[RMDB]
RNA sequence: GGGAACGACUCGAGUAGAGUCGAAAAGCAAGGGGUUAGCCGCAAGGCGAAGCUCUAAACCCAAGUCCCGGUGAAUGUCGGCCGUAACUAUAACGGUCCUAAGGUAGCGAAAUUCCUUGUCGGGUAAGAUUAUGCGUUUCUUCGGAAACGCAUAAUCAAAAGAAACAACAACAACAAC
Reactivity to DMS in 0.01 (KOAc 150mM, MgCl2 10mM, bicine 150mM(pH8.5), 24C), signal-to-noise 3, nucleotides 027 to 126: g010c210a180a180g010g000g010g000u000u000a300g000c000c000g000c290a120a160g010g000c000g010a090a150g010c000u000c000u010a050a110a120c030c010c030a070a110g000u010c000c000c000g000g000u020g000a130a050u000g040u020c180g000g000c010c000g000u000a080a090c180u020a120u010a070a030c010g010g000u000c000c100u010a040a040g000g000u000a110g000c110g000a070a070a130u010u010c020c030u000u000g010u000c010g000g010g000u020a090a150
Reactivity to 2A3 in 0.01 (KOAc 150mM, MgCl2 10mM, bicine 150mM(pH8.5), 24C), signal-to-noise 5, nucleotides 027 to 126: g030c010a080a150g000g040g000g060u290u030a010g000c010c020g040c040a050a040g010g000c000g010a000a000g020c010u010c000u020a160a170a140c010c000c010a010a020g140u070c000c000c000g010g000u070g130a180a060u160g080u180c030g020g000c010c000g020u010a080a040c050u040a120u050a300a000c010g000g000u020c010c010u020a050a010g010g020u020a020g070c060g130a070a050a090u070u060c000c010u010u040g020u040c010g000g000g020u050a080a000
An RNA of 177 nucleotides, treated with DMS and 2A3 and read out base by base. For DMS the reverse transcriptase was MarathonRT. The RNA was probed in 150 mM KOAc, 10 mM MgCl2 and 150 mM bicine (pH 8.5) at 24 C.